This 177-nucleotide RNA was probed chemically with 2A3 and DMS.
RNA sequence: GGGAACGACUCGAGUAGAGUCGAAAAGGGCGGUGACACCGAGGUUCGUAACACCUGGCAGCGCACCGGUCUUCGUGAGGUCAACACGGACACCCCGUAUGACUACAUGACCAUGAAGCUGGCUCAGUAGACGCAUGUCGUUCGCGACAUGCGUCUAAAAAGAAACAACAACAACAAC
Reactivity to 2A3 in 0.01 (KOAc 150mM, MgCl2 10mM, bicine 150mM(pH8.5), 24C), signal-to-noise 1, nucleotides 027 to 126: g000g020g040c020g000g080u000g010a040c010a000c050c090g090a020g080g010u120u160c200g080u140a140a010c020a010c150c020u010g080g010c030a040g000c030g000c070a000c010c000g120g300u000c020u000u030c010g000u030g130a160g030g060u000c010a050a060c020a080c060g040g000a040c000a190c080c040c010c000g010u040a040u120g010a000c000u040a060c020a020u030g040a030c000c010a020u050g080a040a000g030c030u070g050g030c010u000c060a040g100
Reactivity to DMS in 0.01 (KOAc 150mM, MgCl2 10mM, bicine 150mM(pH8.5), 24C), signal-to-noise 2, nucleotides 027 to 126: g020g020g000c000g050g020u000g000a110c060a130c050c040g020a010g000g000u000u020c180g000u020a120a080c250a070c040c030u000g000g040c030a050g000c080g040c040a010c010c010g000g000u000c000u020u020c030g000u000g010a300g010g000u000c030a020a100c170a030c040g030g020a110c240a060c170c180c000c020g000u000a060u000g010a010c000u000a170c080a020u000g060a200c000c000a030u010g000a110a010g000c060u000g010g000c160u000c100a160g040
Description: For 2A3, 1,218 sequencing reads were counted. The reactions ran in a buffer of 150 mM KOAc, 10 mM MgCl2 and 150 mM bicine (pH 8.5), at 24 C.